This 207-nucleotide RNA was probed chemically with 2A3. For 2A3, 1,954 sequencing reads were counted. For 2A3 the reverse transcriptase was SuperScript II with manganese. The reactions ran in a buffer of 150 mM KOAc, 10 mM MgCl2 and 150 mM bicine (pH 8.5), at 24 C.
RNA sequence: GGGAACGACUCGAGUAGAGUCGAAAAGUCCUCUGCCUAGUUUACUGACGGGCUAGAGUCGCAAGACCGGUAGCAAUACCGACAGAGGUCAUAUACGUCAGUUAAGCCUUGGUGGUGUCACGACAUCCGGGUCGAAAAUCUAGUGAAUCGCCGUAGUCAAGCGAGAUUAGUUCGCUAAUCUCGCUUGAAAAGAAACAACAACAACAAC
Reactivity to 2A3 in 0.01 (KOAc 150mM, MgCl2 10mM, bicine 150mM(pH8.5), 24C), signal-to-noise 2, nucleotides 027 to 156: g060u080c010c000u010c000u010g030c000c000u000a010g010u020u010u140a010c000u000g000a000c000g000g010g030c000u010a010g000a010g010u000c000g020c060a070a130g010a000c010c010g000g000u020a010g010c050a080a090u000a030c000c010g000a000c000a010g020a000g070g040u100c080a010u170a030u050a240c010g000u000c000a010g000u000u020a010a000g000c000c000u020u010g030g000u000g000g040u030g040u020c010a000c020g010a000c000a000u010c000c000g030g000g000u020c010g030a000a000a010a030u170c220u140a030g000u020g030a010a020u120c130g060c130c080g140u170a100g110u030